[RMDB]
RNA sequence: GGGAACGACUCGAGUAGAGUCGAAAAACUGCACCACUAGCUACGGCUAGUGGCGCAGAGGGAAACUCCCAGGCCCCGCUGUAGAGGGACCGUCAGCGGCCGGGCCAGAAAGAAUGAGGUCCCCAAAAGAAGUGGAUACUCUUCGGAGUAUCCACAACCAGCAUGUAUGGUUCGCCAUACAUGCUGGAAAAGAAACAACAACAACAAC
Reactivity to 2A3 in 0.01 (KOAc 150mM, MgCl2 10mM, bicine 150mM(pH8.5), 24C), signal-to-noise 1, nucleotides 027 to 156: a030c000u000g000c000a000c010c000a010c020u000a000g000c020u060a050c270g100g000c040u000a020g000u000g030g050c000g060c000a000g030a050g030g000g020a070a140a110c110u120c000c000c030a020g010g000c000c000c010c000g010c000u000g000u030a090g070a210g100g030g000a020c000c000g040u010c000a000g000c010g090g080c170c300g090g000g010c000c000a030g180a060a050a010g110a090a140u150g060a060g010g000u000c000c000c000c000a020a130a020a000g060a160a060g000u000g000g000a000u000a010c000u010c000u010u020c160g040g000a010g000u010a000u020c010c000a000c000a000a000